An RNA of 177 nucleotides, treated with DMS and read out base by base.
RNA sequence: GGGAACGACUCGAGUAGAGUCGAAAAGUAUAAAUGAUACAGGUUUGCAAUAUUGAUGGAACACUGCUAGUAAAUUCUAGGCUGGGAUUUUACCAUUAGUAGGGACAGAGCAAGAAGAGCAGGCAUGCACAGGGACACUCUUCGGAGUGUCCCUGUGAAAAGAAACAACAACAACAAC
Reactivity to DMS in 0.01 (KOAc 150mM, MgCl2 10mM, bicine 150mM(pH8.5), 24C), signal-to-noise 1, nucleotides 027 to 126: g020u000a050u000a060a180a110u000g040a260u000a110c060a110g000g000u000u000u030g030c070a120a160u010a130u010u000g010a140u020g030g000a050a070c130a040c070u000g010c040u000a080g000u010a060a120a060u000u000c090u000a060g030g000c130u020g000g000g000a060u000u000u000u000a060c000c180a020u020u050a040g000u020a120g000g000g020a050c070a040g010a080g000c090a030a030g000a130a040g000a070g000c040a010g050g000c130a040u000g000
It was measured as part of the RMDB library OK2TRN.